[RMDB]
RNA sequence: GGGAACGACUCGAGUAGAGUCGAAAAAUAAGAUGAGCCGGGCCCGGCAGGGUGGUUUGCGACCGAACCGGCGGCACGUCCAGAGGGGAUCUGACAUGAUCUCGUUUGUCCUCGACGUUGCUGGUAAGAACCAUGGAAAGUUCGCUUUCCAUGGUUCAAAAGAAACAACAACAACAAC
Reactivity to 2A3 in 0.01 (KOAc 150mM, MgCl2 10mM, bicine 150mM(pH8.5), 24C), signal-to-noise 2, nucleotides 027 to 126: a000u190a080a060g080a070u180g100a000g010c000c010g000g010g040c040c000c000g120g100c070a140g010g020g000u010g000g040u000u000u050g020c020g050a000c000c000g030a000a010c000c010g000g000c000g000g000c010a010c010g010u000c030c020a040g030a020g000g030g000g000a000u010c000u040g120a060c040a200u230g020a050u000c010u020c070g050u040u070u180g150u090c000c000u010c000g010a010c010g050u060u100g000c020u040g000g020u010a080a050
Reactivity to DMS in 0.01 (KOAc 150mM, MgCl2 10mM, bicine 150mM(pH8.5), 24C), signal-to-noise 3, nucleotides 027 to 126: a090u030a070a050g000a140u000g010a180g030c010c000g010g010g000c030c030c000g020g050c300a070g000g030g010u010g000g000u000u000u040g010c240g010a060c010c010g000a030a030c000c000g000g000c000g000g000c050a030c020g000u000c010c160a040g010a060g010g000g000g000a000u010c020u010g000a130c300a120u030g010a030u010c010u000c000g020u000u000u010g010u010c030c010u010c160g000a030c030g000u000u030g020c000u000g000g010u010a060a150

Annotation
Structure probing data (2A3 and DMS) for a 177-nucleotide construct. The 2A3 profile rests on 1,403 reads. Conditions: 150 mM KOAc, 10 mM MgCl2 and 150 mM bicine (pH 8.5), 24 C. For DMS the reverse transcriptase was MarathonRT.